The data come from the RNA Mapping Database (RMDB), library OK1LIB. Structure probing data (2A3 and DMS) for a 177-nucleotide construct. The DMS profile rests on 4,465 reads. High DMS reactivity at an A or C suggests that its Watson-Crick edge is free. The reactions ran in a buffer of 150 mM KOAc, 10 mM MgCl2 and 150 mM bicine (pH 8.5), at 24 C. For 2A3 the reverse transcriptase was SuperScript II with manganese. DMS adducts were read by reverse transcription with MarathonRT. Reactivities are given for positions 27 through 126.
[RMDB]
RNA sequence: GGGAACGACUCGAGUAGAGUCGAAAAGGUUUUCUGGCAAUCAAAAUCGUCAUGCUGUGGCUGGUCGCGAGGCCGCUGGGCGUACCGGCAAAACAGCGUCGCUGGUUUGCCGUCUUAUUAGGCCAGGUAGUCCUGGCCGUUUCGACGGCCAGGACUAAAAAGAAACAACAACAACAAC
Reactivity to 2A3 in 0.01 (KOAc 150mM, MgCl2 10mM, bicine 150mM(pH8.5), 24C), signal-to-noise 2, nucleotides 027 to 126: g080g000u040u010u100u050c000u000g010g030c060a020a090u110c060a030a110a050a230u100c050g090u030c000a090u170g080c050u070g100u040g090g000c040u050g120g000u140c060g040c090g100a110g010g030c040c030g040c000u020g040g000g000c020g000u020a030c010c010g000g000c020a000a100a000a000c040a000g010c020g300u150c200g000c010u000g000g060u000u010u000g000c000c000g000u020c050u000u180a210u060u190a080g150g000c000c020a000g000g060
Reactivity to DMS in 0.01 (KOAc 150mM, MgCl2 10mM, bicine 150mM(pH8.5), 24C), signal-to-noise 2, nucleotides 027 to 126: g010g000u010u000u000u000c000u030g000g000c010a160a030u030c130a090a050a140a090u030c110g000u030c130a050u020g010c050u010g000u040g000g000c030u040g080g000u010c010g010c300g000a200g000g010c030c010g010c000u010g000g000g000c010g020u030a040c080c000g000g000c000a000a000a000a020c010a000g010c010g010u010c170g000c000u020g010g000u000u010u000g020c000c000g010u080c060u000u020a090u000u020a120g000g010c000c000a040g020g010